[RMDB]
RNA sequence: GGGAACGACUCGAGUAGAGUCGAAAAUACUAGCAUUCGGUUCCAACCCUGGAUGGUUACUCAAAGGUUGGCUGAGUUCCUUCCUCCGGCCUUGGUUCCGAUGCUCCAUCCAAGGCCGGAAACCAAAGUAUACGCGUGUAUUCGUACACGCGUAUACAAAAGAAACAACAACAACAAC
Reactivity to DMS in 0.01 (KOAc 150mM, MgCl2 10mM, bicine 150mM(pH8.5), 24C), signal-to-noise 3, nucleotides 027 to 126: u010a070c100u000a070g020c100a060u010u000c050g000g000u020u010c040c050a030a080c040c010c070u000g010g000a040u000g010g030u010u010a030c080u010c010a070a100a110g020g020u000u000g000g010c140u000g000a100g000u000u000c020c020u000u000c070c030u000c020c010g020g000c010c000u000u000g010g000u000u000c090c080g020a090u010g010c030u000c060c060a040u000c020c010a010a010g010g000c000c010g010g000a000a040a050c130c150a040a060a130
Reactivity to 2A3 in 0.01 (KOAc 150mM, MgCl2 10mM, bicine 150mM(pH8.5), 24C), signal-to-noise 2, nucleotides 027 to 126: u130a020c040u020a010g050c010a060u050u140c030g010g010u100u100c020c000a040a020c010c000c020u020g120g020a060u040g050g170u140u150a060c030u020c060a070a060a000g090g000u040u020g040g000c020u020g050a030g020u030u010c000c000u040u090c000c000u000c010c020g020g000c000c000u000u000g000g000u070u090c020c000g030a060u060g020c000u020c010c010a050u020c000c000a000a000g000g000c030c000g000g010a000a000a000c010c000a080a050a010